[RMDB]
RNA sequence: GGGAACGACUCGAGUAGAGUCGAAAAUAAGAAAAAUGGGACCAACAAUGACUCGUCCAUUUAGAGCAAAAAUUUUAAAAGUAAUGGCACCAUUAUCAUUUGUAUUAGCUUCAUUAGCUAUAUAUUGCGGAUCAAUUAGAUUCGUCUAAUUGAUCCGAAAAGAAACAACAACAACAAC
Reactivity to 2A3 in 0.01 (KOAc 150mM, MgCl2 10mM, bicine 150mM(pH8.5), 24C), signal-to-noise 2, nucleotides 027 to 126: u020a000a040g110a040a080a000a000a000u020g000g040g070a060c020c020a020a050c080a010a190u090g080a150c010u010c010g080u030c000c050a040u110u100u140a040g000a010g000c000a060a080a150a100a130u090u170u190u300a120a210a070a080g080u080a090a100u020g000g020c020a010c010c000a000u010u060a030u180c030a050u020u120u110g020u010a100u060u050a070g010c000u070u060c090a170u150u190a020g000c000u010a000u000a010u000a020u190u120g060
Reactivity to DMS in 0.01 (KOAc 150mM, MgCl2 10mM, bicine 150mM(pH8.5), 24C), signal-to-noise 2, nucleotides 027 to 126: u000a120a080g020a010a080a040a060a000u010g040g000g010a180c010c020a050a050c100a100a100u010g010a100c000u010c010g010u010c090c120a090u000u010u010a140g010a060g000c070a020a070a050a070a080u010u000u000u010a040a100a060a100g000u010a050a070u000g020g010c210a050c040c000a040u000u000a060u010c050a040u010u010u010g030u030a060u000u000a000g010c000u000u010c300a080u020u000a080g000c000u010a000u010a150u010a100u020u000g020